[RMDB]
RNA sequence: GGGAACGACUCGAGUAGAGUCGAAAAGAUAUGGAUCCUCCAGCAUGAAGCGAUAGUGUCGGAAACGACAUCAUCGGGUGCUCGGAGGAUCCUAAGUCAAAUCACACGGAUCUUCGGAUCCGUGUGACAAUACUAAUUACUUCGGUAAUUAGUAUUGAAAAGAAACAACAACAACAAC
Reactivity to 2A3 in 0.01 (KOAc 150mM, MgCl2 10mM, bicine 150mM(pH8.5), 24C), signal-to-noise 7, nucleotides 027 to 126: g020a010u040a010u070g000g000a000u000c000c000u000c000c000a010g000c040a090u300g300a300a070g180c000g010a010u020a040g020u000g000u010c000g000g000a020a030a030c000g010a000c010a010u050c010a000u000c000g140g110g150u200g020c060u140c270g000g000a000g010g000a000u000c000c000u000a000a000g000u000c010a010a030a190u030c000a000c000a000c000g000g000a000u020c010u090u210c300g110g000a000u000c020c000g000u000g000u000g000a000
Reactivity to DMS in 0.01 (KOAc 150mM, MgCl2 10mM, bicine 150mM(pH8.5), 24C), signal-to-noise 9, nucleotides 027 to 126: g010a020u000a150u010g000g000a010u000c000c000u000c000c000a020g010c010a160u010g020a180a180g020c020g010a010u000a030g030u000g000u000c000g010g000a040a040a100c000g010a010c000a000u000c050a010u000c000g020g000g030u000g010c000u000c200g050g000a020g010g000a000u010c000c000u000a000a070g000u000c020a090a110a270u000c000a010c000a000c000g000g000a010u000c000u000u010c260g030g000a010u000c000c000g010u000g000u000g000a010